[RMDB]
RNA sequence: GGGAACGACUCGAGUAGAGUCGAAAAACCACUUUCGAGUGGUACUAUGGGGUCCGAGACCGCUUUCUCACAAUUGUCAGGACUGAAGCCUCCACGGUCCUUGGAUUUAUGAGAAAUGUCUCGGACGGAGGCACCCUAACGCAAGCUUCGGCUUGAACUGAGGGAGAUGAUUCGUCAUCUCCCUCAGAAAAGAAACAACAACAACAAC
Reactivity to 2A3 in 0.01 (KOAc 150mM, MgCl2 10mM, bicine 150mM(pH8.5), 24C), signal-to-noise 2, nucleotides 027 to 156: a000c010c000a020c010u080u030u110c280g160a040g010u030g010g010u030a000c020u070a120u200g120g000g000g000u010c000c010g000a000g000a010c010c010g010c030u000u020u000c010u010c000a090c030a020a120u160u160g140u220c080a010g000g010a010c010u000g020a030a010g040c020c030u040c040c040a010c010g010g030u010c000c000u100u160g070g060a080u060u180u170a150u220g000a000g000a000a010a040u190g000u000c000u010c000g010g000a000c000g000g000a010g010g000c030a030c000c030c020u090a170a030c090g030c090a060a000g010c000u070u190c250g090g000c000u010u070g030a100a060
The record gives the reactivity of an RNA of 207 nucleotides to 2A3. Values cover nucleotides 27 to 156. 2A3 adducts were read by reverse transcription with SuperScript II with manganese.